Chemical mapping of a 207-nucleotide RNA with 2A3. Conditions: 150 mM KOAc, 10 mM MgCl2 and 150 mM bicine (pH 8.5), 24 C. The data come from the RNA Mapping Database (RMDB), library ARCHII. Reactivities are rounded to 0.1 and cut off at 0 and 3. For 2A3 the reverse transcriptase was SuperScript II with manganese.
RNA sequence: GGGAACGACUCGAGUAGAGUCGAAAACGCCCUCGCUGCCUGAUUAGGCCGAGCUGCGAAUCCGUCAGUCUAGAGUUGCUUCCACUCUAGGUCCUGGCGUCGCUUAGGGAGCCACUGCUUCAGAUAUUUGUUGAGGGUAUCUGAGGGACUUUUACUCGAACCUUAACCUCUUCGGAGGUUAAGGUUCAAAAGAAACAACAACAACAAC
Reactivity to 2A3 in 0.01 (KOAc 150mM, MgCl2 10mM, bicine 150mM(pH8.5), 24C), signal-to-noise 1, nucleotides 027 to 156: c020g000c000c050c000u000c020g150c190u200g000c030c010u220g050a300u240u300a020g010g000c000c000g020a000g010c020u070g000c010g060a050a040u020c000c030g010u000c000a000g020u000c000u000a000g000a000g010u030u150g060c030u030u000c000c000a000c000u010c000u000a000g000g000u030c010c010u020g010g000c010g100u090c050g000c100u100u210a090g010g010g000a000g010c000c000a040c000u000g000c000u000u010c000a000g040a020u000a050u010u040u160g050u070u030g020a100g000g000g000u020a010u000c010u000g010a000g020g000g010a030c040u100u120u200u080a100c100u110c100